[RMDB]
RNA sequence: GGGAACGACUCGAGUAGAGUCGAAAAGCCUGCUUCUCCGGCGGGAUACUCACAAGAUUCUUCAAGUGGCUCGGGGCAAAGAGGGUUAUCACGACGUCGAACUCGGUGUAUAUGCUGCGGCGGAGGGCUUCCUUUACGGAUUCGUCCGUAAAGGAAGAAAAGAAACAACAACAACAAC
Reactivity to DMS in 0.01 (KOAc 150mM, MgCl2 10mM, bicine 150mM(pH8.5), 24C), signal-to-noise 3, nucleotides 027 to 126: g000c010c010u000g010c020u010u020c040u000c070c090g030g010c030g020g000g000a060u000a050c060u000c060a070c130a080a110g010a160u000u000c030u000u000c070a120a170g020u020g000g020c070u010c060g030g000g010g020c160a030a040a060g010a080g020g000g020u000u010a080u000c050a070c070g030a150c150g000u000c050g000a020a090c080u000c150g000g000u000g000u000a040u000a070u000g010c020u000g020c040g020g000c060g020g010a050g000g010g000
Reactivity to 2A3 in 0.01 (KOAc 150mM, MgCl2 10mM, bicine 150mM(pH8.5), 24C), signal-to-noise 2, nucleotides 027 to 126: g050c020c000u000g030c000u170u110c030u010c030c020g080g010c000g000g030g010a020u050a060c050u050c020a040c020a080a110g050a210u120u060c030u080u110c070a090a060g010u010g020g000c000u030c040g060g000g010g000c080a070a070a010g050a030g040g060g020u060u090a100u220c010a000c070g100a010c100g060u080c020g020a030a010c030u010c030g030g000u040g000u020a080u000a020u180g100c020u030g020c000g120g000c010g000g050a030g010g010g000